[RMDB]
RNA sequence: GGGAACGACUCGAGUAGAGUCGAAAACGUCGGAGCACGGAAGAUCCGAAGUACCAGGGCCAAACUGGGGAGCAUCCGUAAUAGGUCCUCGAAGACUUCCAGGGGCGCUACGCUUGGCAGGGACUGCCCUACCUGAGUCCUUCGGGACUCAGGUAGGAAAAGAAACAACAACAACAAC
Reactivity to 2A3 in 0.01 (KOAc 150mM, MgCl2 10mM, bicine 150mM(pH8.5), 24C), signal-to-noise 1, nucleotides 027 to 126: c030g050u010c010g010g040a040g060c050a050c150g060g020a070a030g000a050u000c020c010g000a080a000g000u060a080c010c030a060g040g000g020c020c010a120a040a030c070u070g000g020g000g040a030g080c060a060u060c000c010g020u030a110a050u070a130g010g040u030c000c000u030c020g080a090a050g050a080c000u010u000c000c040a120g000g000g000g000c040g000c080u140a020c030g020c030u100u120g080g000c010a040g070g050g010a050c040u070g000c010
Reactivity to DMS in 0.01 (KOAc 150mM, MgCl2 10mM, bicine 150mM(pH8.5), 24C), signal-to-noise 2, nucleotides 027 to 126: c070g030u000c010g000g000a070g000c070a080c170g020g010a050a060g010a210u000c010c010g010a020a120g000u010a090c100c070a060g010g010g010c040c060a040a080a110c110u000g000g000g000g000a080g000c120a050u010c040c030g000u010a090a060u030a140g020g000u000c040c000u020c090g000a120a050g000a090c020u000u010c060c030a110g000g020g000g010c060g000c040u000a060c080g000c040u000u000g000g030c030a060g010g000g000a130c050u000g000c140

Chemical mapping of a 177-nucleotide RNA with 2A3 and DMS.
Values cover nucleotides 27 to 126.
For DMS, 1,433 sequencing reads were counted.
Conditions: 150 mM KOAc, 10 mM MgCl2 and 150 mM bicine (pH 8.5), 24 C.